[RMDB]
The record gives the reactivity of an RNA of 207 nucleotides to 2A3. It was measured as part of the RMDB library RNAMAK. Conditions: 150 mM KOAc, 10 mM MgCl2 and 150 mM bicine (pH 8.5), 24 C. The 2A3 profile rests on 1,743 reads.

RNA sequence: GGGAACGACUCGAGUAGAGUCGAAAAGGGGUCGGAUACUUUGAUCAACAUAGCUCGCAGAUAUAUACUGAAGCCUCCACGGUAUAUGUAGAGCUAGUUGGGAGUAUCCGACGGAGGCACCCAAAUCUGCAGAAGUGAUUCGUCACUUCUGCAGAAACGUAUCCGAAAUGUUCGCAUUUCGGAUACGAAAAGAAACAACAACAACAAC
Reactivity to 2A3 in 0.01 (KOAc 150mM, MgCl2 10mM, bicine 150mM(pH8.5), 24C), signal-to-noise 2, nucleotides 027 to 156: g040g020g100g020u010c020g000g000a000u010a000c000u270u300u040g010a010u030c000a030a000c090a300u020a000g000c010u010c020g030c300a000g030a070u010a000u000a000u000a000c010u060g060a170a000g020c000c000u000c010c000a010c020g000g020u000a000u010a010u000g030u040a040g000a000g000c000u000a000g010u010u000g020g000g000a000g000u000a000u010c010c020g000a000c000g010g000a000g000g020c000a010c010c000c020a040a100a070u020c000u000g000c000a000g000a000a000g020u000g010a010u040u230c240g050u020c120a000c010u000u020c000u000g000c000a000g000a000a010a000